[RMDB]
RNA sequence: GGGAACGACUCGAGUAGAGUCGAAAAGAUAUGGACCCUGUGGUAGUUCGUAUUCGGAAACGAAUAUACGAAGCCACUGGGUCCUAAGUCAAACCCUCGCUUUUAACGUUCGCGUUAAAAGCGAGGGGCUAAAUAUGCUGUUCGCAGCAUAUUUAGCAAAAGAAACAACAACAACAAC
Reactivity to DMS in 0.01 (KOAc 150mM, MgCl2 10mM, bicine 150mM(pH8.5), 24C), signal-to-noise 6, nucleotides 027 to 126: g000a040u000a300u010g000g010a010c000c000c000u000g010u000g000g010u000a110g030u000u000c000g020u000a020u000u000c000g010g000a120a090a220c010g010a030a040u010a110u010a040c040g010a020a100g000c010c000a010c000u000g000g000g010u000c000c000u000a010a090g010u000c030a110a150a300c000c000c000u000c000g000c000u000u000u000u000a000a000c000g020u010u010c300g010c010g020u000u000a000a000a010a010g010c000g000a000g000g000g000
Reactivity to 2A3 in 0.01 (KOAc 150mM, MgCl2 10mM, bicine 150mM(pH8.5), 24C), signal-to-noise 6, nucleotides 027 to 126: g020a020u080a050u120g000g000a000c000c010c020u020g010u020g000g050u130a300g300u080u010c000g000u000a020u010u010c010g020g040a030a060a050c000g010a030a000u220a010u010a090c010g000a010a010g010c000c000a000c000u000g010g010g010u000c000c000u000a010a000g010u000c010a020a030a150c010c000c000u000c000g000c010u010u000u010u020a010a000c010g050u060u090c300g000c000g170u000u010a020a000a000a000g010c000g000a000g000g000g000